Chemical mapping of a 207-nucleotide RNA with 2A3 and DMS. For DMS, 6,079 sequencing reads were counted. 2A3 adducts were read by reverse transcription with SuperScript II with manganese. The data come from the RNA Mapping Database (RMDB), library M2RFPK.

RNA sequence: GGGAACGACUCGAGUAGAGUCGAAAAGACCAAUAACAGAAUGCACCACAGCGUAAAAUCAUCUGAUUGGGUGAGUUGGUCGCACCGCCAUUUGACGAACGAACGCCAAGCCUGAGCCGUCUUUGUGAACACGAGCUAGUCUUCGGACUAGCUCGAAUCACUAUUCUAUGUUCGCAUAGAAUAGUGAAAAAGAAACAACAACAACAAC
Reactivity to 2A3 in 0.01 (KOAc 150mM, MgCl2 10mM, bicine 150mM(pH8.5), 24C), signal-to-noise 5, nucleotides 027 to 156: g010a020c010c010a010a050u110a060a010c030a040g140a160a090u120g030c020a000c040c000a020c060a060g050c030g070u110a030a080a060a070u080c040a010u010c050u060g100a220u140u170g060g000g000u020g030a060g010u010u030g010g010u030c020g000c030a020c000c030g000c010c010a060u060u050u120g030a030c050g020a120a030c030g030a040a020c030g030c020c010a050a010g020c010c020u050g010a020g000c020c000g030u030c030u030u070u070g100u030g070a070a030c060a020c070g000a000g000c000u000a000g000u030c000u010u060c190g040g000a000c010u000a000g000c000u000c000g000a000a000
Reactivity to DMS in 0.01 (KOAc 150mM, MgCl2 10mM, bicine 150mM(pH8.5), 24C), signal-to-noise 3, nucleotides 027 to 156: g010a150c020c010a090a080u000a110a260c080a240g000a090a100u000g020c010a080c010c040a080c040a100g020c040g030u000a070a070a110a110u000c020a050u000c030u000g020a130u000u000g000g000g000u000g000a130g010u000u010g010g000u000c050g030c040a110c030c010g020c020c010a140u000u010u000g020a030c000g010a100a120c070g000a060a080c050g010c000c010a040a140g010c010c040u000g000a080g000c010c030g000u000c030u010u000u010g000u000g000a080a130c070a190c010g000a030g040c000u000a030g010u000c000u000u000c300g080g000a020c000u000a010g010c000u000c000g020a090a030